Structure probing data (DMS) for a 177-nucleotide construct. It was measured as part of the RMDB library OK2TST.
RNA sequence: GGGAACGACUCGAGUAGAGUCGAAAAACAGGGACGAUCCCCGGGCAACGCAGGGGACCGCCAGCCGGGGCAGUGCCGCCCGUAAACGACGCUGGCACGACAGGCAACGGGGACUGAUGUGGGACGAUCAGUCUUCGAAGUUCGCUUCGAAGACUGAAAAAGAAACAACAACAACAAC
Reactivity to DMS in 0.01 (KOAc 150mM, MgCl2 10mM, bicine 150mM(pH8.5), 24C), signal-to-noise 1, nucleotides 027 to 126: a040c080a110g000g000g000a090c070g020a090u000c000c000c000c000g000g000g010c060a070a120c230g040c050a110g010g010g000g020a060c070c050g000c020c000a030g010c040c020g000g020g010g010c050a070g020u000g020c070c040g000c000c000c010g040u020a020a060a180c090g000a110c170g000c020u000g010g020c030a060c020g030a130c100a060g000g000c000a100a130c060g000g000g000g000a020c060u000g010a020u000g000u010g000g000g020a070c110g020a100